[RMDB]
Record summary:
Chemical mapping of a 177-nucleotide RNA with DMS and 2A3. Reactivities are given for positions 27 through 126. The reactions ran in a buffer of 150 mM KOAc, 10 mM MgCl2 and 150 mM bicine (pH 8.5), at 24 C.
RNA sequence: GGGAACGACUCGAGUAGAGUCGAAAAAGAGGCACGUGUGUGUGUGUGUGUGUGUAUCUGUAUCCUUGUCUGUGCAUGCACACGUGUGUCUGGGAGUGUGAAUGUGUGUGACUGGUUGUAGGGAACUACAAUGACCUUAGUUCGCUAAGGUCAUUGUAAAAGAAACAACAACAACAAC
Reactivity to DMS in 0.01 (KOAc 150mM, MgCl2 10mM, bicine 150mM(pH8.5), 24C), signal-to-noise 3, nucleotides 027 to 126: a040g020a070g010g020c010a020c000g010u000g000u010g020u000g010u000g010u010g010u050g020u000g020u000g020u000g010u010a060u020c080u020g000u010a080u020c040c040u010u020g010u010c070u010g020u000g000c000a020u000g000c000a000c000a000c010g010u000g000u000g000u000c010u000g000g010g010a080g010u000g010u010g010a060a060u000g010u000g000u010g010u000g020a070c060u010g000g010u000u000g000u000a040g010g000g000a070a090c100u000
Reactivity to 2A3 in 0.01 (KOAc 150mM, MgCl2 10mM, bicine 150mM(pH8.5), 24C), signal-to-noise 6, nucleotides 027 to 126: a000g060a010g010g010c010a010c010g010u010g000u000g000u000g000u000g000u000g010u000g000u010g010u010g010u020g030u040a100u100c060u060g090u090a100u080c030c020u080u130g120u070c040u070g070u060g010c010a000u000g000c000a000c000a000c000g000u010g000u000g090u010c000u010g020g020g010a070g020u060g010u030g060a100a050u060g030u020g010u010g010u030g050a060c040u050g060g030u020u020g010u050a030g000g030g030a040a000c020u010